[RMDB]
RNA sequence: GGGAACGACUCGAGUAGAGUCGAAAAGAUUGCGGCUUCGGCCGCAAUCAAAGGUCUACCCGUCAGGGUUAAGGCCAUACGGACAGCCGGGUCCACUGCCGAAAAUCUCCAACUUCGGUUGGAGAAAUCCAACUGAUAUCUUCGGAUAUCAGUUGGAAAAAGAAACAACAACAACAAC
Reactivity to 2A3 in 0.01 (KOAc 150mM, MgCl2 10mM, bicine 150mM(pH8.5), 24C), signal-to-noise 1, nucleotides 027 to 126: g000a000u000u000g020c000g030g000c010u070u130c300g110g020c000c000g000c000a000a020u000c000a000a020a000g010g000u000c030u040a070c010c010c000g130u120c130a140g040g020g000u030u200a070a040g000g020c000c020a000u090a000c060g040g050a020c020a020g010c020c030g040g020g030u000c000c010a070c040u090g030c000c010g090a100a100a000a070u010c000u080c000c010a000a010c000u040u060c290g120g000u010u000g000g010a020g000a010a000a000
Reactivity to DMS in 0.01 (KOAc 150mM, MgCl2 10mM, bicine 150mM(pH8.5), 24C), signal-to-noise 1, nucleotides 027 to 126: g000a010u000u000g030c010g010g010c020u010u010c170g010g010c000c000g040c000a000a000u000c000a030a080a120g030g000u000c000u000a140c020c010c010g000u000c300a090g010g010g010u000u010a040a040g040g030c000c000a070u010a070c080g010g000a090c070a110g000c100c030g000g000g000u000c010c040a050c040u000g010c000c020g010a130a070a110a100u000c000u010c000c000a000a000c000u000u020c240g020g010u010u000g000g000a010g000a010a010a060

The data come from the RNA Mapping Database (RMDB), library M2PK50. Structure probing data (2A3 and DMS) for a 177-nucleotide construct.